RNA sequence: GGGAACGACUCGAGUAGAGUCGAAAAACGAUCGCAGUACGCUGCGAUCGAAUGCAUUUAUUUCAACAGAAACUCAGCGGCCACCGCGCAGGUGGCCUUUUUUAGAUGCACGGUACGCCGUGCAUCAAUAGGAGGACUGUUUCGACAGUCCUCCUAUAAAAGAAACAACAACAACAAC
Reactivity to DMS in 0.01 (KOAc 150mM, MgCl2 10mM, bicine 150mM(pH8.5), 24C), signal-to-noise 1, nucleotides 027 to 126: a110c000g000a000u010c000g080c040a000g000u000a210c200g000c000u000g000c060g000a000u000c000g030a010a090u010g000c050a060u040u040u010a110u000u000u000c080a070a090c130a090g010a070a050a070c230u050c140a070g000c210g000g000c010c000a000c010c020g000c300g030c180a180g040g000u000g000g000c000c000u000u000u010u010u010u010a050g030a040u000g030c000a000c010g010g010u000a020c260g020c040c000g000u000g000c000a000u000c020a030
Background:
This 177-nucleotide RNA was probed chemically with DMS. Conditions: 150 mM KOAc, 10 mM MgCl2 and 150 mM bicine (pH 8.5), 24 C. The data come from the RNA Mapping Database (RMDB), library RFM100.